[RMDB]
RNA sequence: GGGAACGACUCGAGUAGAGUCGAAAAUCGCUUGGGCGAGCAUCUCGCGCCCGUCGGCGGCGCGGGCGGCCGGCUGCCCGGUGGUGCAGGCGAGGGCGGCGCACACCGCCAACGCGGCGUAGCAAGCGGGAUACGGUGUUUUCGAACACCGUAUCCCAAAAGAAACAACAACAACAAC
Reactivity to 2A3 in 0.01 (KOAc 150mM, MgCl2 10mM, bicine 150mM(pH8.5), 24C), signal-to-noise 2, nucleotides 027 to 126: u110c030g000c030u140u230g040g030g020c020g030a020g000c030a070u030c000u010c010g030c000g010c000c010c010g100u090c060g080g080c080g000g000c030g000c060g030g000g010c000g010g060c000c030g090g020c040u080g020c030c000c000g000g060u060g000g020u060g010c030a060g120g020c010g050a100g000g030g040c000g000g020c020g010c020a020c010a000c010c000g000c000c010a010a010c000g030c050g030g000c000g010u050a040g070c050a070a010g000c010
Reactivity to DMS in 0.01 (KOAc 150mM, MgCl2 10mM, bicine 150mM(pH8.5), 24C), signal-to-noise 2, nucleotides 027 to 126: u020c060g000c030u000u020g010g000g050c030g000a100g000c040a050u030c000u000c010g000c000g010c020c030c050g030u040c170g000g020c110g000g000c000g000c040g000g000g000c050g000g030c020c050g010g010c060u030g000c030c030c000g000g060u020g000g030u000g000c000a070g010g000c030g020a170g000g010g000c000g020g010c070g000c130a130c140a160c000c000g020c000c060a030a090c040g000c050g000g000c070g000u000a100g000c140a030a080g000c070